[RMDB]
RNA sequence: GGGAACGACUCGAGUAGAGUCGAAAAGCCGACCCGAAGAGGAAAGGAGGACACGGACGACAAACCGUAAGUUCUACUGCCCUUUAUUGUUGGGUGCACCCUGGGACCCAGUAAUACCCGGGGGGAGAGACCCCUGUGUUCGCACAGGGGAAAAGAAACAACAACAACAAC
Reactivity to 2A3 in 0.01 (KOAc 150mM, MgCl2 10mM, bicine 150mM(pH8.5), 24C), signal-to-noise 9, nucleotides 027 to 129: g050c020c020g050a050c000c010c010g030a060a020g040a040g010g020a090a030a020g020g020a010g000g000a010c020a010c030g030g050a040c060g020a030c130a040a110a020c030c000g040u060a080a060g010u020u020c010u030a120c020u050g030c020c000c020u060u070u040a200u050u160g110u050u080g010g000g000u020g000c020a100c010c000c010u000g000g030g020a060c010c010c050a060g110u190a050a060u100a200c010c000c000g000g000g000g000g000g000a090g000a010g030a040
Reactivity to DMS in 0.01 (KOAc 150mM, MgCl2 10mM, bicine 150mM(pH8.5), 24C), signal-to-noise 6, nucleotides 027 to 129: g030c060c040g000a080c070c020c030g000a070a040g020a000g030g030a040a220a010g000g000a040g000g000a050c050a030c000g040g000a010c070g010a110c300a090a140a080c040c020g050u000a060a060g000u000u000c000u030a000c070u030g020c300c020c030u040u040u050a120u050u050g000u050u030g000g000g000u040g020c080a140c010c000c000u000g000g000g000a120c060c020c030a160g040u060a050a050u060a110c100c020c030g000g000g000g000g000g000a090g030a080g020a090